[RMDB]
RNA sequence: GGGAACGACUCGAGUAGAGUCGAAAAUUUUAAAGGUAAUUCACUAUGUCCGGUAAAAUGACUGGUAUCGUAAAAUGGUUCAACGCUGACAAAGGCUUCGGCUUCAUCACUCCUGACGAUGGCUCUAUCCCUCUUUGUUGUUCGCAACAAAGAGGGAAAAAGAAACAACAACAACAAC
Reactivity to DMS in 0.01 (KOAc 150mM, MgCl2 10mM, bicine 150mM(pH8.5), 24C), signal-to-noise 2, nucleotides 027 to 126: u040u010u020u070a070a120a120g000g030u010a150a100u020u010c080a070c060u020a070u020g000u000c030c050g040g000u010a010a030a020a020u030g000a080c040u010g000g000u020a040u030c120g040u010a050a130a070a020u020g000g050u030u000c050a030a070c040g000c050u020g030a040c000a080a150a110g000g000c030u010u000c070g000g040c030u010u060c060a040u040c090a070c100u010c040c010u010g000a040c110g000a080u000g000g000c060u020c000u020a210
Reactivity to 2A3 in 0.01 (KOAc 150mM, MgCl2 10mM, bicine 150mM(pH8.5), 24C), signal-to-noise 2, nucleotides 027 to 126: u040u120u090u090a070a070a150g170g030u050a060a020u040u090c050a000c030u070a100u170g060u040c020c000g000g060u040a040a130a000a120u160g080a080c040u020g050g000u040a020u050c060g000u010a010a010a000a240u050g000g070u000u060c030a040a000c010g000c060u070g030a030c000a030a150a000g010g030c000u050u050c030g000g050c030u050u060c030a030u150c010a000c030u000c000c000u020g000a080c060g020a040u030g030g000c000u000c000u100a070

An RNA of 177 nucleotides, treated with DMS and 2A3 and read out base by base. For DMS, 2,491 sequencing reads were counted. For 2A3, 1,249 sequencing reads were counted. The RNA was probed in 150 mM KOAc, 10 mM MgCl2 and 150 mM bicine (pH 8.5) at 24 C.